[RMDB]
RNA sequence: GGGAACGACUCGAGUAGAGUCGAAAAGCGAAUGGGACCCAGAAAUCUCCUUUGAUUCCCAGAGAGAAUCAGGAGAAAACUGGCUCUCCCUUAGCCAUCCGAGUGGACGUCUGUCCUCCUUCGGAUGCCCUUCUGAAUUCUUCGGAAUUCAGAAGGGAAAAGAAACAACAACAACAAC
Reactivity to 2A3 in 0.01 (KOAc 150mM, MgCl2 10mM, bicine 150mM(pH8.5), 24C), signal-to-noise 1, nucleotides 027 to 126: g010c000g030a060a000u020g000g000g000a020c080c000c000a000g020a030a300a000u000c000u020c040c000u120u120u250g000a000u000u020c010c030c160a100g050a000g000a000g000a140a010u010c020a010g000g000a000g000a000a010a000a000c000u010g000g020c000u010c010u000c010c000c000u010u000a000g000c010c010a010u020c010c000g030a020g040u010g000g000a000c000g110u130c200u300g010u000c020c020u040c010c060u070u060c010g020g000a020u000g030
Reactivity to DMS in 0.01 (KOAc 150mM, MgCl2 10mM, bicine 150mM(pH8.5), 24C), signal-to-noise 1, nucleotides 027 to 126: g010c030g030a110a030u000g000g000g000a030c250c010c000a020g020a010a160a190u000c000u000c000c000u010u030u010g030a010u010u010c000c020c220a290g000a240g000a120g000a010a010u000c000a010g010g000a020g000a010a040a080a110c050u000g000g000c010u000c060u000c000c000c000u000u000a150g010c020c010a010u000c000c000g020a050g000u000g000g040a000c010g030u010c210u010g000u000c030c010u000c050c130u000u000c010g000g010a010u000g010